[RMDB]
Structure probing data (2A3) for a 207-nucleotide construct. For 2A3 the reverse transcriptase was SuperScript II with manganese. High 2A3 reactivity points to a flexible backbone, as in loops and unpaired stretches. Source: RMDB library M2RFPK, as collected in RNAgym.

RNA sequence: GGGAACGACUCGAGUAGAGUCGAAAACUGCUCGGGGCGGAAGCAUUAAAACCAUUCGAACUAGUCAAUGCGUGGCGUGUCUCUCCGCAGCGUGUUGGCGAAUGUAAAGAGUGACUAAGCAUGUAGUGAGAGUGGGCCGUCUUCGGACGGCCCACAACAACUAUUGUUAGUUCGCUAACAAUAGUUGAAAAGAAACAACAACAACAAC
Reactivity to 2A3 in 0.01 (KOAc 150mM, MgCl2 10mM, bicine 150mM(pH8.5), 24C), signal-to-noise 1, nucleotides 027 to 156: c010u000g000c000u000c010g020g030g000g000c040g030g030a040a010g050c080a050u110u140a080a060a040a040c040c000a060u020u010c050g020a060a030c060u030a060g020u010c000a010a000u030g000c040g020u040g090g000c000g000u040g070u000c010u010c010u000c090c000g000c010a030g010c000g020u030g000u010u000g000g000c000g030a000a000u100g020u080a010a030a030g020a010g020u020g020a010c020u010a050a050g090c070a110u110g050u160a080g040u100g180a100g020a040g060u000g020g000g000c080c010g000u000c000u030u020c080g070g000a000c060g000g000c000c000c010a010c040a000a000